[RMDB]
RNA sequence: GGGAACGACUCGAGUAGAGUCGAAAAUAAAAUGGUAAGAACGGUUCCAAAGGAGCCGAAGGUCAUAGCUAUGGCAUCGAUCUAAAAUCUUAUCAAUUAGGUGACGAGCAUGGCACUGAUCAAAAAACUCCUCUAAAAUGUUCGCAUUUUAGAGGAGAAAAGAAACAACAACAACAAC
Reactivity to DMS in 0.01 (KOAc 150mM, MgCl2 10mM, bicine 150mM(pH8.5), 24C), signal-to-noise 1, nucleotides 027 to 126: u000a010a100a090a060u000g000g000u000a040a060g000a050a300c000g020g000u000u000c000c010a080a160a200g040g000a030g050c020c010g020a020a040g020g030u000c000a040u000a150g000c000u010a040u000g010g030c020a020u000c100g030a040u000c000u000a030a070a130a080u000c040u000u000a050u000c040a070a090u000u000a040g000g000u000g000a050c050g010a030g030c050a050u010g010g040c030a090c300u030g010a030u020c060a050a090a030a070a060a190
Reactivity to 2A3 in 0.01 (KOAc 150mM, MgCl2 10mM, bicine 150mM(pH8.5), 24C), signal-to-noise 1, nucleotides 027 to 126: u150a000a060a000a090u120g000g000u050a070a060g040a120a040c000g050g020u030u000c030c000a170a190a230g040g000a000g000c020c070g050a040a040g020g010u000c000a010u040a030g000c020u000a010u130g070g000c010a040u010c050g010a000u000c010u070a020a010a140a110u070c040u080u180a070u100c000a070a180u040u030a010g010g010u010g030a020c020g020a020g040c040a020u040g020g000c030a030c050u030g020a040u070c140a030a000a000a030a010a120
The record gives the reactivity of an RNA of 177 nucleotides to DMS and 2A3. The RNA was probed in 150 mM KOAc, 10 mM MgCl2 and 150 mM bicine (pH 8.5) at 24 C. The 2A3 profile rests on 1,196 reads. Reactivities are given for positions 27 through 126.